[RMDB]
RNA sequence: GGGAACGACUCGAGUAGAGUCGAAAAUUGGGCGAAAAACCCUCGGCGUACACGAUGCCCUGGCCGGGCGGAUAGUCACCGGCGCGCGAAUACAGCAUCCGCAGCAGGUUGGAGAGGGUGGUCACGCGUGGUGAAUAGAUUUCGAUCUAUUCACCACAAAAGAAACAACAACAACAAC
Reactivity to 2A3 in 0.01 (KOAc 150mM, MgCl2 10mM, bicine 150mM(pH8.5), 24C), signal-to-noise 2, nucleotides 027 to 126: u060u020g070g110g020c040g050a050a040a000a070a080c030c030c000u030c050g020g020c050g020u090a030c080a010c100g030a020u070g010c020c000c030u040g100g000c030c000g000g000g000c040g030g070a140u170a050g070u070c030a010c140c010g030g000c030g010c000g000c020g070a030a060u260a100c040a050g000c000a020u010c000c020g030c020a070g010c000a000g120g050u140u170g040g040a060g000a010g000g020g010u020g010g030u040c020a010c060g040c050
Reactivity to DMS in 0.01 (KOAc 150mM, MgCl2 10mM, bicine 150mM(pH8.5), 24C), signal-to-noise 6, nucleotides 027 to 126: u000u000g000g020g000c020g000a050a060a090a140a050c010c000c000u000c060g000g020c040g010u010a070c110a080c120g010a240u010g020c010c010c020u000g000g020c130c120g000g010g000c030g000g000a120u000a060g010u000c060a090c020c010g000g000c030g010c110g020c040g010a060a050u010a090c180a110g030c110a070u000c020c030g010c030a130g020c040a070g000g010u000u000g020g000a130g000a040g000g000g020u000g010g010u000c140a080c080g010c140

Chemical mapping of a 177-nucleotide RNA with 2A3 and DMS. For DMS, 7,119 sequencing reads were counted. Values cover nucleotides 27 to 126.